[RMDB]
RNA sequence: GGGAACGACUCGAGUAGAGUCGAAAAACCUUUUGCACCGCAGUCAAUAUUGGCUGAUGGCAUUGUUUUAUUGUCACAGCCAGUAUUGAUGAACGGGGUAAUAGGAAAAGCGGUUGUUCGCAACCGCGUAAUAUAACCGCUUCGGCGGUUAUAUUACAAAAGAAACAACAACAACAAC
Reactivity to DMS in 0.01 (KOAc 150mM, MgCl2 10mM, bicine 150mM(pH8.5), 24C), signal-to-noise 4, nucleotides 027 to 126: a080c000c000u000u000u000u000g010c030a010c020c000g010c080a300g010u000c000a000a000u000a010u000u010g000g000c010u010g000a100u000g010g010c000a010u000u000g010u020u010u010u010a040u020u010g020u010c000a030c010a010g010c000c010a010g010u000a010u000u000g010a010u000g000a100a300c000g000g000g010g020u000a000a000u000a010g010g000a090a070a120a140g010c000g000g000u000u000g010u000u020c190g000c020a020a010c000c000g010c010
Reactivity to 2A3 in 0.01 (KOAc 150mM, MgCl2 10mM, bicine 150mM(pH8.5), 24C), signal-to-noise 4, nucleotides 027 to 126: a000c010c000u020u000u000u010g020c010a010c000c000g030c040a000g000u000c000a000a000u000a020u000u000g000g000c010u020g220a300u000g020g000c050a020u020u050g250u120u300u120u220a140u100u020g010u020c000a000c000a000g000c000c000a000g000u000a000u000u000g000a000u000g010a060a010c000g000g020g000g010u000a010a020u020a070g000g020a070a090a040a030g010c000g000g000u020u010g030u060u170c230g010c100a000a000c000c000g000c000